Background:
An RNA of 177 nucleotides, treated with 2A3 and DMS and read out base by base. The RNA was probed in 150 mM KOAc, 10 mM MgCl2 and 150 mM bicine (pH 8.5) at 24 C. For 2A3, 3,313 sequencing reads were counted.

[RMDB]
RNA sequence: GGGAACGACUCGAGUAGAGUCGAAAACUCAGCUGACCUAGAAGUGCUUCUGAGACCAGGCCUCAUUUGUGUUUUGUUAUAUCUUCAGUUAUAUAAACCAUGAGGAACAAAUGGAGAAAGGGAAAGGGAUCUAGGUUUGAUUCGUCAAACCUAGAUCAAAAGAAACAACAACAACAAC
Reactivity to 2A3 in 0.01 (KOAc 150mM, MgCl2 10mM, bicine 150mM(pH8.5), 24C), signal-to-noise 4, nucleotides 027 to 126: c000u010c010a000g020c010u030g040a080c000c030u060a090g040a300a020g180u080g080c020u010u030c000u020g030a040g050a070c010c030a010g010g070c000c000u030c020a020u060u130u130g110u000g020u010u010u090u070g080u090u060a080u020a030u060c070u140u120c100a080g040u100u050a050u010a010u030a060a020a000c010c000a020u030g000a000g020g030a010a030c010a000a070a020u070g000g030a040g060a080a070a030g050g010g030a090a070a020g100g040
Reactivity to DMS in 0.01 (KOAc 150mM, MgCl2 10mM, bicine 150mM(pH8.5), 24C), signal-to-noise 5, nucleotides 027 to 126: c010u000c010a050g010c050u000g000a100c060c040u000a090g010a120a120g000u010g010c020u010u000c020u010g010a110g010a240c040c030a110g000g010c020c000u000c010a020u000u010u000g010u020g010u000u000u010u010g010u000u010a030u010a030u000c070u010u010c180a130g020u000u000a030u010a050u010a030a030a040c020c020a040u010g010a020g020g000a100a080c100a070a070a090u000g000g000a090g000a040a050a070g000g000g000a050a060a080g010g000